[RMDB]
RNA sequence: GGGAACGACUCGAGUAGAGUCGAAAAGAUAUGGAAAAGAAAGAUUAUGUUACGUGCGAUAAGUAGAGAUCGGAAACGAUCUUCUACUUUUGACGCACGUGUAACAUAAUCUUUCUUUUCCUAAGUCCUAUAUGAGUAACUUCGGUUACUCAUAUAGAAAAGAAACAACAACAACAAC
Reactivity to DMS in 0.01 (KOAc 150mM, MgCl2 10mM, bicine 150mM(pH8.5), 24C), signal-to-noise 4, nucleotides 027 to 126: g010a120u010a300u010g010g000a020a000a010a000g010a010a010a000g000a010u000u000a010u000g010u000u000a010c000g020u000g020c010g010a140u000a010a020g020u000a010g000a040g000a020u000c000g010g010a130a100a250c000g010a010u000c000u010u010c000u000a010c000u000u000u000u010g010a220c130g000c000a000c010g010u000g010u010a010a000c000a010u000a000a000u000c010u000u000u000c000u000u000u000u000c000c000u000a020a100g000u000c030